[RMDB]
RNA sequence: GGGAACGACUCGAGUAGAGUCGAAAAAUGAUUCAAGGUGGGGUGAUUGAUAAAACAGUUUUAGUUUUUGGCCAAAUGAAUGAACCACCAGGAGCUAGAAUGAGAGUUGCUUUAACUGCUUUAACAAGUAGCUCAUUACGUUCGCGUAAUGAGCUACAAAAGAAACAACAACAACAAC
Reactivity to DMS in 0.01 (KOAc 150mM, MgCl2 10mM, bicine 150mM(pH8.5), 24C), signal-to-noise 1, nucleotides 027 to 126: a040u020g030a120u000u000c050a040a170g020g030u000g000g030g000g020u000g040a030u030u000g040a090u000a090a070a070a020c040a170g010u000u000u070u000a070g020u000u000u000u000u010g000g000c140c020a020a090a130u030g010a010a070u000g000a240a190c090c090a040c000c040a030g000g000a010g040c030u000a020g010a020a020u010g000a190g020a080g030u000u000g030c180u000u020u020a120a060c090u000g020c070u030u000u030a060a080c130a080a060